Description
An RNA of 177 nucleotides, treated with DMS and 2A3 and read out base by base. For DMS the reverse transcriptase was MarathonRT. The DMS profile rests on 954 reads. For 2A3, 1,013 sequencing reads were counted. 2A3 adducts were read by reverse transcription with SuperScript II with manganese.
RNA sequence: GGGAACGACUCGAGUAGAGUCGAAAAGGGUUUGGAUUACAUCAAUAGUCACAUGAGCAGAAGUAAUCAGAACAAGAAGUACUGCGGUUAUUCAAGUUCAAAGUUCACACUAUCGCAAUAAAUUGAAGCAAUUACGCUUAUUCGUAAGCGUAAUUGCAAAAGAAACAACAACAACAAC
Reactivity to DMS in 0.01 (KOAc 150mM, MgCl2 10mM, bicine 150mM(pH8.5), 24C), signal-to-noise 2, nucleotides 027 to 126: g050g030g000u000u000u020g020g000a080u030u000a070c100a120u010c060a080a100u010a110g000u010c020a070c130a070u020g010a070g020c020a030g000a070a060g000u010a000a000u010c050a140g000a020a010c050a020a210g010a100a070g000u010a060c090u010g010c080g020g010u000u000a090u000u000c030a060a220g000u000u010c080a070a060a080g030u000u000c070a080c060a050c010u010a030u000c120g020c020a060a030u010a020a070a130u000u010g000a120a100
Reactivity to 2A3 in 0.01 (KOAc 150mM, MgCl2 10mM, bicine 150mM(pH8.5), 24C), signal-to-noise 2, nucleotides 027 to 126: g050g000g000u020u060u060g010g020a030u040u050a020c020a010u040c040a070a150u060a130g080u120c050a040c080a180u150g070a030g000c030a010g010a090a010g050u050a060a000u030c040a000g020a050a040c060a030a030g110a060a000g020u050a010c040u020g050c030g030g000u060u000a090u060u100c030a040a050g020u040u030c000a090a000a050g020u110u130c070a010c020a010c080u150a100u130c080g000c070a020a070u140a150a120a070u130u110g060a060a000